Source information: The record gives the reactivity of an RNA of 177 nucleotides to 2A3 and DMS. The RNA was probed in 150 mM KOAc, 10 mM MgCl2 and 150 mM bicine (pH 8.5) at 24 C. Reactivities are rounded to 0.1 and cut off at 0 and 3. 2A3 adducts were read by reverse transcription with SuperScript II with manganese. The 2A3 profile rests on 5,285 reads.
RNA sequence: GGGAACGACUCGAGUAGAGUCGAAAAGAUAUGGAGACCUCAAGCUCAUCGAUCGUGGGAGAUAGCUGCUAUGGUCGGAAACGACCAUAGCCGAAACCCACGGGAGAGCUAAGAGGUCUCCUAAGUCCUAGAGAUUAAGGUUCGCCUUAAUCUCUAGAAAAGAAACAACAACAACAAC
Reactivity to 2A3 in 0.01 (KOAc 150mM, MgCl2 10mM, bicine 150mM(pH8.5), 24C), signal-to-noise 2, nucleotides 027 to 126: g000a000u040a000u040g010g000a030g000a000c010c010u020c020a030a000g010c000u010c020a210u300c090g000a020u010c020g000u010g000g060g030a210g080a290u260a160g190c140u070g000c000u030a000u000g000g000u000c000g000g000a020a030a000c000g010a000c000c000a000u000a000g000c000c000g000a050a030a010c000c000c000a010c000g010g000g000a020g020a000g000c010u020a080a000g010a000g000g000u000c000u000c010c000u000a000a000g010u020c010
Reactivity to DMS in 0.01 (KOAc 150mM, MgCl2 10mM, bicine 150mM(pH8.5), 24C), signal-to-noise 4, nucleotides 027 to 126: g000a020u000a030u000g000g010a020g010a010c000c010u000c000a230a150g010c000u000c000a300u000c270g000a020u020c010g000u000g000g010g010a140g020a200u000a090g010c190u020g030c000u000a000u010g010g000u000c000g020g010a010a010a050c000g010a020c000c000a000u000a000g010c010c030g010a060a200a110c000c000c000a010c000g000g000g000a010g010a010g020c010u010a030a080g010a020g020g010u000c000u000c000c000u000a000a080g000u010c010